[RMDB]
RNA sequence: GGGAACGACUCGAGUAGAGUCGAAAACAGGCCUGCUAGGCCUCUGGGUGACAGAGAGGGGACCCACCUCGACAGCUCGGGCCACGUCCUUAAACUCCCGAGCCUGCUGUGGCCACUUUGCUGUGAGAAGAUGAAUCGGAUUCGUCCGAUUCAUCUUAAAAGAAACAACAACAACAAC
Reactivity to DMS in 0.01 (KOAc 150mM, MgCl2 10mM, bicine 150mM(pH8.5), 24C), signal-to-noise 3, nucleotides 027 to 126: c180a050g000g010c000c020u000g020c190u010a060g040g000c010c000u000c070u000g000g000g030u010g000a080c060a030g010a100g020a070g000g020g010g010a140c030c020c030a180c060c060u010c010g010a130c080a070g000c010u000c020g020g000g010c280c100a090c100g000u020c060c100u000u010a050a150a110c120u000c010c000c010g000a060g010c050c040u000g010c050u000g020u000g000g000c020c020a070c070u000u000u000g020c020u000g000u000g000a150g000
Reactivity to 2A3 in 0.01 (KOAc 150mM, MgCl2 10mM, bicine 150mM(pH8.5), 24C), signal-to-noise 2, nucleotides 027 to 126: c030a020g040g000c000c020u160g180c140u240a030g000g040c000c000u030c040u020g050g010g020u090g100a040c020a040g070a010g020a020g110g010g020g000a040c030c000c000a040c010c030u050c010g020a030c020a000g030c030u060c010g020g030g020c070c040a070c100g100u100c010c080u120u110a150a170a020c020u010c040c000c000g000a010g040c010c000u030g000c010u010g000u040g050g000c020c050a080c060u080u130u110g080c050u050g030u010g100a140g090